Conditions: 150 mM KOAc, 10 mM MgCl2 and 150 mM bicine (pH 8.5), 24 C. An RNA of 177 nucleotides, treated with 2A3 and DMS and read out base by base. It was measured as part of the RMDB library OK2TRN. For DMS, 1,314 sequencing reads were counted.

RNA sequence: GGGAACGACUCGAGUAGAGUCGAAAAUGCGAUAUAUGCGUAUAUACGCUAUAUAGCGCGCGCGAUAUAUGCGUAUUAUCGCCGCUAUCGCAUAAUACGCGCGUAUCGCAUAGCGGCGCGCAUACGCUGCCGAUUUUUAGUUCGCUAAAAAUCGGCAAAAAGAAACAACAACAACAAC
Reactivity to 2A3 in 0.01 (KOAc 150mM, MgCl2 10mM, bicine 150mM(pH8.5), 24C), signal-to-noise 1, nucleotides 027 to 126: u060g000c000g010a000u000a000u000a000u080g010c000g070u030a150u010a020u020a240c010g010c050u030a020u000a000u000a030g030c000g010c020g010c030g000c000g090a010u010a000u020a010u040g000c000g050u000a010u060u050a040u030c060g010c030c010g010c080u090a080u160c060g010c020a010u020a060a020u080a060c060g030c000g000c000g020u030a060u110c060g000c050a050u080a070g040c000g000g000c000g000c030g030c070a070u050a110c010g030c110
Reactivity to DMS in 0.01 (KOAc 150mM, MgCl2 10mM, bicine 150mM(pH8.5), 24C), signal-to-noise 2, nucleotides 027 to 126: u020g010c010g000a130u000a010u010a020u000g000c000g010u000a110u010a110u010a000c000g020c010u000a050u000a020u010a110g000c000g000c120g000c060g000c030g000a050u000a010u000a030u010g020c010g010u000a000u000u000a090u000c090g030c030c130g050c180u000a050u000c180g010c090a040u010a000a030u000a010c080g000c000g000c060g020u010a010u000c060g030c020a120u020a120g010c050g020g000c010g010c040g020c090a050u000a060c090g000c070